[RMDB]
RNA sequence: GGGAACGACUCGAGUAGAGUCGAAAAGUGUGAAGUGAGUCUCCCUCUUACGAGCACGAAUUACAUGGGAGUGUUAACAUUACUGGGCGCCAGGAGCCCUACCUGGACAAGUAGCGAAGUACGGCCCGGGUAUGAGCUACGACUAAUUACGGGCACACGCGGAUUAUUAGUUCGCUAAUAAUCCGCGAAAAGAAACAACAACAACAAC
Reactivity to 2A3 in 0.01 (KOAc 150mM, MgCl2 10mM, bicine 150mM(pH8.5), 24C), signal-to-noise 2, nucleotides 027 to 156: g040u060g020u070g050a030a020g000u010g030a050g040u040c010u000c010c000c010u080c020u030u040a060c030g010a040g000c010a020c090g100a130a130u130u080a150c050a080u110g000g000g000a060g040u040g040u060u160a090a070c060a070u050u160a080c050u020g040g020g000c070g000c010c020a020g020g000a050g020c030c000c010u030a030c000c000u030g000g030a050c040a110a030g010u010a000g000c020g040a150a010g000u000a020c000g040g000c000c000c000g000g000g020u070a090u160g010a000g000c000u020a000c020g060a000c060u040a000a090u090u100a010c030g000g000g020c000a020c000a010